[RMDB]
RNA sequence: GGGAACGACUCGAGUAGAGUCGAAAACUGGCGUCUUCGACGUCCGAGUUGUAAUUUGAAGAAGGCAACUUUGUAGCUGGUCCUUGUCUAUGUUCCUUGGAACAGGACGUCAUAGAGGGUGAGAAUCCCGUGUGGCGAGGAUCCCAGUUAUUUGUAAGUGUCAUUUAAAGUUCGCUUUAAAUGACACAAAAGAAACAACAACAACAAC
Reactivity to DMS in 0.01 (KOAc 150mM, MgCl2 10mM, bicine 150mM(pH8.5), 24C), signal-to-noise 3, nucleotides 027 to 156: c030u000g030g010c030g010u000c010u000u000c110g000a040c020g000u000c000c000g010a130g020u020u000g010u000a070a130u000u000u010g020a120a150g010a120a100g010g030c020a060a110c030u000u000u010g040u010a060g000c050u010g020g010u000c010c030u000u020g030u000c030u000a090u010g000u000u010c000c030u000u010g030g020a090a070c050a100g010g020a090c050g010u000c050a080u000a120g040a200g020g000g000u000g000a300g010a250a080u000c000c010c010g010u000g030u000g000g010c020g010a110g040g010a050u000c080c010c020a090g000u000u000a030u000u010u000g010u010a090a300
Reactivity to 2A3 in 0.01 (KOAc 150mM, MgCl2 10mM, bicine 150mM(pH8.5), 24C), signal-to-noise 4, nucleotides 027 to 156: c020u020g010g000c000g010u010c020u300u140c260g030a010c010g030u020c010c050g080a040g010u000u030g040u060a140a250u080u080u230g130a100a070g040a050a030g060g020c030a040a010c000u070u080u180g020u020a000g010c010u010g010g010u010c000c000u040u070g010u000c030u050a230u070g020u070u030c020c000u020u180g120g000a020a000c000a020g000g020a020c010g010u020c020a030u060a090g190a100g050g020g000u020g000a050g010a030a110u040c000c000c010g020u050g000u010g030g030c030g020a020g000g000a060u060c000c030c010a020g010u010u040a040u070u100u120g130u090a160a180